[RMDB]
Conditions: 150 mM KOAc, 10 mM MgCl2 and 150 mM bicine (pH 8.5), 24 C. Structure probing data (DMS and 2A3) for a 207-nucleotide construct.
RNA sequence: GGGAACGACUCGAGUAGAGUCGAAAAGAAAGAAAGAAAGCGGUUGGGUGGGUCCAUCGACCGUCGUGGCGUAUUCGGACGCUUUACCACGACGCGAGGAAAUAGCGAGACCUACCACCCCCUUUAACAGAGGUAUAGUAGUUCGCUACUAUACCAAGCAUUUCAAUAAGUUCGCUUAUUGAAAUGCAAAAGAAACAACAACAACAAC
Reactivity to DMS in 0.01 (KOAc 150mM, MgCl2 10mM, bicine 150mM(pH8.5), 24C), signal-to-noise 1, nucleotides 027 to 156: g000a170a070a190g000a100a150a160g000a190a150a100g010c070g030g000u000u010g000g010g000u020g000g010g040u000c010c020a120u000c030g000a120c230c020g040u000c020g110u010g010g010c030g030u000a040u000u030c080g030g020a150c080g000c120u000u000u010a040c040c000a000c000g000a040c010g080c030g050a140g000g000a050a080a120u000a170g050c070g020a290g010a150c050c020u000a090c000c030a040c010c030c010c050c010u020u020u000a080a180c180a150g000a160g010g000u000a000u000a020g020u000a000g020u000u000c300g030c000u000a010c010u000a000u000a020c000c000a000a070
Reactivity to 2A3 in 0.01 (KOAc 150mM, MgCl2 10mM, bicine 150mM(pH8.5), 24C), signal-to-noise 4, nucleotides 027 to 156: g050a010a020a000g040a040a080a020g030a020a100a000g070c130g060g090u170u160g150g020g020u060g030g010g020u010c030c010a090u070c010g040a070c040c000g000u000c000g000u000g010g000c070g010u080a210u070u230c130g110g030a010c030g030c090u140u060u070a050c000c000a010c030g000a000c000g000c010g000a020g060g090a080a130a080u080a020g070c040g010a070g000a070c000c000u000a010c010c000a000c000c000c000c000c000u000u050u040a120a050c080a030g060a070g130g000u000a000u000a000g000u000a000g000u010u050c210g010c120u010a000c000u000a000u000a000c000c000a000a000
DMS adducts were read by reverse transcription with MarathonRT.